[RMDB]
RNA sequence: GGGAACGACUCGAGUAGAGUCGAAAAGAAUCACCGUACCUAUUUAGGUUUACGCUCCAAGAUCGGUGGAUAGCAGCCCUAUCAAUAUCUAGUAGAACUGUGCUAUGUUUAGAAGAUUAGGUAGUCUAUUACACAGCCAUGUUCGCAUGGCUGUGAAUCUCUUAUUCCCGUUCGCGGGAAUAAGAGAAAAAGAAACAACAACAACAAC
Reactivity to 2A3 in 0.01 (KOAc 150mM, MgCl2 10mM, bicine 150mM(pH8.5), 24C), signal-to-noise 2, nucleotides 027 to 156: g050a010a070u110c000a000c010c000g030u050a060c020c000u060a090u190u300u180a070g010g030u000u090u130a080c030g050c020u020c020c020a040a020g050a150u100c020g010g020u020g050g030a010u030a030g030c030a010g020c000c010c000u040a040u050c020a030a060u060a000u170c010u040a000g010u010a010g050a200a060c080u070g040u090g050c000u030a010u110g080u010u040u000a080g020a150a030g000a060u080u100a000g040g000u040a050g080u030c020u030a050u070u120a050c010a000c010a000g000c010c000a000u000g010u050u040c080g000c070a000u000g030g000c010u020g000u000g000a000a000
Reactivity to DMS in 0.01 (KOAc 150mM, MgCl2 10mM, bicine 150mM(pH8.5), 24C), signal-to-noise 2, nucleotides 027 to 156: g000a110a080u010c030a130c030c000g030u010a090c010c010u010a200u000u010u000a070g010g020u000u000u000a070c120g030c030u000c020c010a140a130g000a070u010c040g010g050u000g050g020a080u010a080g000c020a090g010c120c020c000u000a070u000c030a070a110u000a110u000c060u000a080g020u000a070g020a010a050c070u000g000u010g030c060u000a050u000g000u000u000u000a080g000a090a140g000a110u000u000a060g010g000u010a100g010u000c040u000a090u000u000a210c000a020c000a000g020c000c000a010u000g000u000u000c280g050c000a020u000g000g030c000u000g000u000g010a010a110
Overview: This 207-nucleotide RNA was probed chemically with 2A3 and DMS. Source: RMDB library M2RFPK, as collected in RNAgym. For DMS the reverse transcriptase was MarathonRT. For 2A3, 1,182 sequencing reads were counted.